[RMDB]
The record gives the reactivity of an RNA of 207 nucleotides to 2A3.
The RNA was probed in 150 mM KOAc, 10 mM MgCl2 and 150 mM bicine (pH 8.5) at 24 C.
It was measured as part of the RMDB library OK3TST.
RNA sequence: GGGAACGACUCGAGUAGAGUCGAAAAAGCAAGUUCUAGAGAAGAGGCUGGUGCUGUGGCCAGGGUGAGAGCUGCUCUGGAAAAUGUGACCCAGAUCCUCACAACCACCUAAUCAGGCUGAGGUGUCUUAAGCCUUUUGCUCACAAAACCUGGCACAGUACACGUUCGUUUUCGAACGAACGUGUACAAAAGAAACAACAACAACAAC
Reactivity to 2A3 in 0.01 (KOAc 150mM, MgCl2 10mM, bicine 150mM(pH8.5), 24C), signal-to-noise 2, nucleotides 027 to 156: a000g050c040a040a020g050u040u050c020u050a000g000a000g010a230a000g010a020g060g000c040u050g050g080u120g020c090u050g040u090g080g080c000c000a020g020g010g000u050g000a120g000a000g040c050u070g010c000u020c000u030g000g030a020a040a040a110u070g060u080g040a060c000c000c000a020g020a070u110c030c000u080c000a080c020a050a050c010c040a070c020c020u050a120a060u100c070a060g020g020c020u020g010a010g050g000u070g010u010c070u050u110a040a020g000c030c000u020u030u030u040g000c000u000c030a030c030a010a160a030a050c010c000u030g020g000c000a010c000a000

The 2A3 profile rests on 1,334 reads.